[RMDB]
RNA sequence: GGGAACGACUCGAGUAGAGUCGAAAAUGGGGAGCGUCGAUAAGCCUAUCGACGAAAUCGACAUCCGUAGCCACUUCAAAGGCUGGCACGUGGCGGAAUACUCCGCGGACCAGGACCGUGCUGGCGCGCGGAAUAAUAGAUUCGUCUAUUAUUCCGCAAAAGAAACAACAACAACAAC
Reactivity to DMS in 0.01 (KOAc 150mM, MgCl2 10mM, bicine 150mM(pH8.5), 24C), signal-to-noise 9, nucleotides 027 to 126: u000g010g010g010g000a100g000c080g010u000c010g010a010u000a040a250g020c140c120u000a080u000c080g010a020c000g010a030a070a060u000c040g000a070c060a110u000c030c020g020u000a090g010c020c020a100c140u000u000c110a090a110a110g010g010c020u000g000g010c090a010c020g020u010g010g010c020g000g000a050a130u010a140c180u000c010c010g020c000g010g000a120c060c050a050g000g010a200c070c010g010u000g000c030u000g010g010c010g020c200
Reactivity to 2A3 in 0.01 (KOAc 150mM, MgCl2 10mM, bicine 150mM(pH8.5), 24C), signal-to-noise 9, nucleotides 027 to 126: u100g010g000g010g020a050g120c030g010u000c000g000a000u020a090a100g080c050c100u060a060u050c030g030a030c000g010a050a020a030u060c010g030a020c010a070u010c010c020g040u040a030g050c020c010a080c040u130u110c100a140a090a030g160g000c010u010g010g000c010a000c020g020u050g080g000c010g000g020a040a030u150a170c100u020c020c000g010c010g030g030a070c030c020a020g040g040a040c020c010g000u010g000c010u010g010g000c040g000c030
Background:
Structure probing data (DMS and 2A3) for a 177-nucleotide construct. The data come from the RNA Mapping Database (RMDB), library OK2TST. For 2A3 the reverse transcriptase was SuperScript II with manganese. The 2A3 profile rests on 30,575 reads. The reactions ran in a buffer of 150 mM KOAc, 10 mM MgCl2 and 150 mM bicine (pH 8.5), at 24 C.